An RNA of 177 nucleotides, treated with 2A3 and DMS and read out base by base. The reactions ran in a buffer of 150 mM KOAc, 10 mM MgCl2 and 150 mM bicine (pH 8.5), at 24 C. The 2A3 profile rests on 17,777 reads. It was measured as part of the RMDB library TTRDES. For 2A3 the reverse transcriptase was SuperScript II with manganese.
RNA sequence: GGGAACGACUCGAGUAGAGUCGAAAAGAUAUGGAAUAUUGUCUCGAAGAACUAGGUCAGGUCGGAAACGACCUGAGCCUAGGGAGAGAUAAUAUUCCUAAGUCAAACCGAACCUUCGGGUUCGGAACUUGUAGUUAUGGUUCGCCAUAACUACAAGAAAAGAAACAACAACAACAAC
Reactivity to 2A3 in 0.01 (KOAc 150mM, MgCl2 10mM, bicine 150mM(pH8.5), 24C), signal-to-noise 5, nucleotides 027 to 126: g030a030u100a040u170g000g000a010a000u000a000u010u010g010u000c000u010c050g290a300a190g020a250a140c020u000a000g010g010u030c000a000g010g000u000c000g030g050a100a050a050c020g000a000c000c010u000g000a010g040c010c000u000a000g000g030g010a170g000a000g000a000u010a000a000u000a000u000u010c000c010u000a070a020g030u000c030a040a070a170c010c000g000a000a000c000c000u080u110c300g210g000g000u000u000c010g000g000a010a030
Reactivity to DMS in 0.01 (KOAc 150mM, MgCl2 10mM, bicine 150mM(pH8.5), 24C), signal-to-noise 6, nucleotides 027 to 126: g000a050u010a300u000g000g000a020a000u000a000u000u000g000u000c000u000c000g030a160a210g030a170a220c000u000a000g000g010u000c000a010g000g010u000c000g000g000a090a100a230c000g000a010c000c000u000g000a040g010c000c000u000a000g000g020g010a110g000a010g010a010u000a010a010u000a010u000u000c000c000u000a010a060g010u000c030a120a190a270c000c000g000a010a010c000c000u000u020c250g040g010g020u000u000c000g000g000a020a050